[RMDB]
Source: RMDB library OK2TST, as collected in RNAgym. Chemical mapping of a 177-nucleotide RNA with 2A3 and DMS.
RNA sequence: GGGAACGACUCGAGUAGAGUCGAAAACGGCCGCAAUGCGCAGCUAGCGGCCAUGUUGAUCGAAAUCAUUUGGGGUACACCGCAUCUCGGAGCAAUAUGGUAGCUAAACUUGCUUAGCUUGCUUCGCCCUAAUGAGCUAUUUCGAUAGCUCAUUAGGAAAAGAAACAACAACAACAAC
Reactivity to 2A3 in 0.01 (KOAc 150mM, MgCl2 10mM, bicine 150mM(pH8.5), 24C), signal-to-noise 6, nucleotides 027 to 126: c020g030g010c010c010g000c040a050a080u140g000c260g040c110a110g010c030u020a020g020c000g010g000c000c000a010u080g010u010u080g070a110u040c040g040a040a060a070u090c070a090u040u060u140g030g010g000g020u080a050c070a030c080c030g050c040a080u030c050u030c040g020g010a040g020c010a030a020u080a070u170g120g020u050a020g000c010u080a050a080a100c060u090u090g020c010u050u060a020g020c010u010u020g010c000u030u020c020g060c010
Reactivity to DMS in 0.01 (KOAc 150mM, MgCl2 10mM, bicine 150mM(pH8.5), 24C), signal-to-noise 7, nucleotides 027 to 126: c090g010g020c010c050g020c020a090a090u010g030c040g020c150a080g010c050u000a220g010c010g010g020c010c010a010u000g010u000u000g010a080u000c050g010a060a060a070u010c080a090u000u000u000g000g010g010g020u010a100c120a120c060c040g010c150a060u000c060u000c040g010g000a040g000c010a030a040u010a080u000g010g000u010a060g020c020u000a030a050a120c180u000u000g010c080u000u000a100g010c070u000u000g000c020u000u000c040g010c220
The 2A3 profile rests on 10,332 reads.